Source: RMDB library M2PK50, as collected in RNAgym. The record gives the reactivity of an RNA of 177 nucleotides to DMS and 2A3. For DMS the reverse transcriptase was MarathonRT. Values cover nucleotides 27 to 126. The 2A3 profile rests on 5,778 reads. The reactions ran in a buffer of 150 mM KOAc, 10 mM MgCl2 and 150 mM bicine (pH 8.5), at 24 C.

RNA sequence: GGGAACGACUCGAGUAGAGUCGAAAAACCAUCCUAUUCGUAGGAUGGUGCACCAUUGCCGAUUGUAUAUAAUACCGCAGGCGGAAUAGCGGUUCAAAUAAGGAACUUGUCAGUUCGCUGACAAGAAUAUUCCUGUAGUUUUCGAACUACAGGAAUAAAAAGAAACAACAACAACAAC
Reactivity to DMS in 0.01 (KOAc 150mM, MgCl2 10mM, bicine 150mM(pH8.5), 24C), signal-to-noise 8, nucleotides 027 to 126: a020c000c000a000u000c000c000u000a020u000u010c190g020u000a010g010g000a010u000g000g010u000g000c160a210c020c020a130u010u000g030c030c020g000a140u010u010g020u000a090u010a090u010a120a090u000a040c010c010g020c010a080g010g020c050g010g010a080a080u000a080g000c010g000g000u000u000c150a030a050a090u020a100a130g010g010a100a160c010u000u000g000u000c000a010g010u000u010c200g010c000u000g000a010c000a010a000g000a080a110
Reactivity to 2A3 in 0.01 (KOAc 150mM, MgCl2 10mM, bicine 150mM(pH8.5), 24C), signal-to-noise 5, nucleotides 027 to 126: a000c000c000a000u000c000c000u020a040u030u090c230g060u050a000g000g000a000u000g000g000u000g000c040a030c030c000a070u080u210g040c020c010g100a120u150u100g170u100a110u010a020u030a210a240u080a060c000c010g000c030a040g030g050c080g060g130a140a050u060a090g010c010g000g060u030u080c070a100a080a070u170a170a100g090g010a060a080c000u010u000g000u000c000a010g000u010u110c200g000c080u000g000a000c000a000a000g000a000a000